Structure probing data (2A3 and DMS) for a 177-nucleotide construct.
RNA sequence: GGGAACGACUCGAGUAGAGUCGAAAAAGUGUAAAUUUCGAUACUGCAUGGUUGCACUCUUGUGCAUCCAUUCAGAUCCAACUGGCAGUCAAGCAGGGGAGGCAAUUUGCAGUGCAGAGUAGGGUCAGUCCGACCUGAGAUUCGUCUCAGGUCGGACAAAAGAAACAACAACAACAAC
Reactivity to 2A3 in 0.01 (KOAc 150mM, MgCl2 10mM, bicine 150mM(pH8.5), 24C), signal-to-noise 1, nucleotides 027 to 126: a010g240u200g030u130a140a150a100u050u180u170c060g000a010u090a300c000u000g000c000a010u000g000g020u030u000g000c020a010c000u190c040u210u280g000u000g000c000a020u000c000c010a000u020u000c000a010g040a030u010c020c000a030a050c050u020g050g000c000a030g030u100c040a070a000g000c030a040g000g040g060g020a000g050g000c000a020a100u030u060u150g000c020a020g000u020g110c040a000g030a030g080u060a060g000g060g000u000c020a020
Reactivity to DMS in 0.01 (KOAc 150mM, MgCl2 10mM, bicine 150mM(pH8.5), 24C), signal-to-noise 1, nucleotides 027 to 126: a090g030u000g000u000a050a120a140u000u000u030c090g010a080u010a130c000u000g000c020a030u000g020g010u000u000g000c000a000c000u030c280u000u030g010u000g010c040a030u000c010c010a010u000u000c010a000g000a110u000c060c210a060a100c070u000g010g020c080a090g000u000c060a030a090g050c050a090g010g010g000g000a060g000g010c060a100a060u000u000u000g010c060a030g020u000g000c070a070g010a070g010u000a070g030g000g010u000c110a130

The reactions ran in a buffer of 150 mM KOAc, 10 mM MgCl2 and 150 mM bicine (pH 8.5), at 24 C. For 2A3, 1,029 sequencing reads were counted.